[RMDB]
RNA sequence: GGGAACGACUCGAGUAGAGUCGAAAACUCCGCUAGCGCGGUCAAAUACCACAUUACCGGGUUUGAUAUCGUUAUGUACUACCCCUGCCUUGGCAAGGUGAUUGGUUACAUCUAAUAGCCGAUGGGCUGAUGUGAUCCUGUUCGCAGGAUCACAUCAAAAAGAAACAACAACAACAAC
Reactivity to 2A3 in 0.01 (KOAc 150mM, MgCl2 10mM, bicine 150mM(pH8.5), 24C), signal-to-noise 1, nucleotides 027 to 126: c040u040c000c040g050c060u060a000g000c000g000c000g060g000u000c000a000a110a040u290a300c000c000a010c030a100u090u140a110c070c110g000g050g000u080u000u040g050a030u020a030u090c010g000u060u050a020u300g080u010a040c000u020a020c050c000c000c010u030g000c020c010u000u170g020g000c000a010a030g050g030u000g030a110u040u100g090g010u100u130a060c030a030u010c000u040a060a080u100a210g040c030c010g110a180u240g030g050g000c050
Reactivity to DMS in 0.01 (KOAc 150mM, MgCl2 10mM, bicine 150mM(pH8.5), 24C), signal-to-noise 2, nucleotides 027 to 126: c100u000c030c050g020c070u000a050g000c120g010c090g010g020u010c030a030a050a070u000a150c020c010a100c200a080u000u000a070c200c070g000g010g010u000u000u000g010a080u000a060u010c050g020u000u000a050u020g020u020a050c070u010a180c020c010c020c050u000g010c010c020u000u010g000g010c040a050a040g000g000u000g000a130u010u000g000g000u010u000a030c060a030u000c060u000a080a080u000a110g020c010c020g010a060u000g010g000g020c060
Overview: Chemical mapping of a 177-nucleotide RNA with 2A3 and DMS. The 2A3 profile rests on 859 reads. Conditions: 150 mM KOAc, 10 mM MgCl2 and 150 mM bicine (pH 8.5), 24 C. 2A3 is a SHAPE reagent: it acylates the 2'-hydroxyl of flexible nucleotides of all four kinds.